Conditions: 150 mM KOAc, 10 mM MgCl2 and 150 mM bicine (pH 8.5), 24 C. Chemical mapping of a 177-nucleotide RNA with 2A3 and DMS. Reactivities are given for positions 27 through 126. For DMS, 20,689 sequencing reads were counted. Source: RMDB library 15KREP, as collected in RNAgym.
[RMDB]
RNA sequence: GGGAACGACUCGAGUAGAGUCGAAAAGCACAUUGCCUCCUCUAACGCUUUUCUUGAUUUGAGGACAUCAUGUUUUAGUGUCGCUGCACUUACAACUGGUUUGACUUUUCAAACUGUGCGGCCUGGCCCUAUGGUAAAGGUUCGCCUUUACCAUAGGAAAAGAAACAACAACAACAAC
Reactivity to 2A3 in 0.01 (KOAc 150mM, MgCl2 10mM, bicine 150mM(pH8.5), 24C), signal-to-noise 9, nucleotides 027 to 126: g010c010a000c010a040u020u050g020c000c020u000c010c000u000c020u020a050a020c030g040c060u090u100u120u060c030u100u180g120a240u040u020u070g010a020g010g020a010c000a010u040c010a020u140g070u020u040u020u070a050g000u030g030u060c100g030c250u180g010c020a000c000u050u090a040c040a080a010c030u030g010g020u010u010u010g050a060c060u080u130u100u090c010a010a010a000c010u010g000u010g010c000g020g050c000c010u040g040g000c000
Reactivity to DMS in 0.01 (KOAc 150mM, MgCl2 10mM, bicine 150mM(pH8.5), 24C), signal-to-noise 9, nucleotides 027 to 126: g010c020a020c040a040u000u000g000c130c120u000c010c010u000c020u000a050a080c120g010c140u010u000u000u010c110u010u010g010a150u000u010u000g010a040g010g010a080c040a030u000c030a020u010g010u000u000u000u000a030g010u000g010u000c220g010c180u010g000c010a010c010u000u000a050c140a040a040c070u000g000g010u000u000u000g010a080c300u000u000u010u000c010a010a010a010c010u000g010u000g000c000g020g020c010c010u000g010g010c140